[RMDB]
RNA sequence: GGGAACGACUCGAGUAGAGUCGAAAACCGUAGCAGCUUAAUUGUUGCUCGUCGACUAUCGGGGUUCCCACCUCGGAUAGUAUCGGCGUCGAAAUGUGGGAUGCUAAGUUAGUUUACCGGCUAGCUUUCAAGAUUUAAGGUAAAAACUAUUGAGAAUCCUACAUUGAUGGUUCGCCAUCAAUGUAGGAAAAGAAACAACAACAACAAC
Reactivity to 2A3 in 0.01 (KOAc 150mM, MgCl2 10mM, bicine 150mM(pH8.5), 24C), signal-to-noise 3, nucleotides 027 to 156: c010c010g020u040a010g010c030a010g000c010u030u170a110a070u300u080g010u020u000g000c000u000c010g000u000c000g020a020c010u000a000u000c000g000g000g030g000u100u010c000c000c000a020c000c000u010c010g040g010a000u000a000g020u000a160u080c000g000g000c010g140u170c090g180a000a020a080u300g000u010g000g010g000a010u000g000c010u050a010a010g030u000u010a000g020u140u060u030a030c000c000g000g000c020u000a010g020c000u040u030u040c020a060a020g050a130u010u190u300a300a250g000g000u060a040a040a030a030a040c110u160a170u190u170g090a160g060a100a080u000